[RMDB]
Structure probing data (DMS and 2A3) for a 177-nucleotide construct. 2A3 adducts were read by reverse transcription with SuperScript II with manganese. It was measured as part of the RMDB library TTRDEL. For DMS the reverse transcriptase was MarathonRT.

RNA sequence: GGGAACGACUCGAGUAGAGUCGAAAAGAUAUGGAUGUAUGGGUAGCGAAGAACUCGGAAACGAGGGAGCUACCAUGACAUCCUAAGUCAAAACUCAUCCGUUCUUGUUCGCAAGAACGGAUGAGAAGCUCCAUGUGAGGUUCGCCUCACAUGGAGCAAAAGAAACAACAACAACAAC
Reactivity to DMS in 0.01 (KOAc 150mM, MgCl2 10mM, bicine 150mM(pH8.5), 24C), signal-to-noise 1, nucleotides 027 to 126: g000a040u000a300u000g000g000a000u000g010u000a000u010g040g020g000u000a010g000c020g000a070a110g010a130a300c020u000c000g030g040a070a050a250c000g000a020g010g040g000a030g000c000u000a040c000c000a010u000g010a050c000a000u000c010c000u000a010a120g010u000c070a050a090a150a140c000u000c000a040u000c010c020g010u000u010c000u000u010g000u000u000c130g010c010a000a010g000a000a000c020g010g000a000u000g000a000g000a070a050
Reactivity to 2A3 in 0.01 (KOAc 150mM, MgCl2 10mM, bicine 150mM(pH8.5), 24C), signal-to-noise 2, nucleotides 027 to 126: g020a020u080a030u150g030g000a010u000g040u030a040u170g300g050g100u020a010g000c010g130a300a000g050a170a040c000u000c020g020g080a050a040a030c010g000a000g030g000g000a030g000c000u010a000c000c000a000u020g010a010c000a000u000c010c000u010a110a030g050u010c040a100a010a010a160c000u000c010a010u010c010c010g030u010u000c000u020u040g080u080u070c300g040c150a010a020g010a000a000c000g000g000a000u000g000a000g000a000a000